[RMDB]
Chemical mapping of a 177-nucleotide RNA with 2A3 and DMS. For 2A3 the reverse transcriptase was SuperScript II with manganese. In probing experiments dimethyl sulfate is read out at A N1 and C N3, which are open when not base-paired.
RNA sequence: GGGAACGACUCGAGUAGAGUCGAAAACUACAUAGUUUCGACUAUGUAGAAACCAUUAGGAAGCAUGCAGAUGCAUAUCGACGAGGGCAACUAACCUAUUGCGAACAGCAGGUUUCGACCUGCUGAACUCAUUAGGCUCAUUCGUGAGCCUAAUGAGAAAAGAAACAACAACAACAAC
Reactivity to 2A3 in 0.01 (KOAc 150mM, MgCl2 10mM, bicine 150mM(pH8.5), 24C), signal-to-noise 4, nucleotides 027 to 126: c000u010a000c000a000u020a000g010u000u070u110c160g040a000c010u000a000u010g000u000a000g000a020a010a000c030c000a040u090u130a050g060g100a100a020g040c040a010u090g020c030a020g020a240u080g020c030a050u050a070u110c090g050a080c060g050a070g030g050g000c020a060a030c040u090a040a080c010c000u060a130u050u160g080c070g060a080a040c010a010g010c000a000g000g040u020u090u120c200g060a050c000c010u000g000c000u000g000a000a010
Reactivity to DMS in 0.01 (KOAc 150mM, MgCl2 10mM, bicine 150mM(pH8.5), 24C), signal-to-noise 3, nucleotides 027 to 126: c000u000a000c010a010u010a010g010u000u000u020c140g030a030c010u010a000u000g000u000a020g000a060a070a160c040c020a070u000u010a070g010g000a120a090g010c080a050u000g000c110a040g000a040u000g000c030a070u000a050u010c040g020a100c100g000a080g000g000g010c060a020a050c120u010a070a150c050c010u000a090u000u010g000c060g000a080a230c010a000g010c000a010g000g000u000u000u010c160g010a030c000c000u000g010c000u000g000a030a120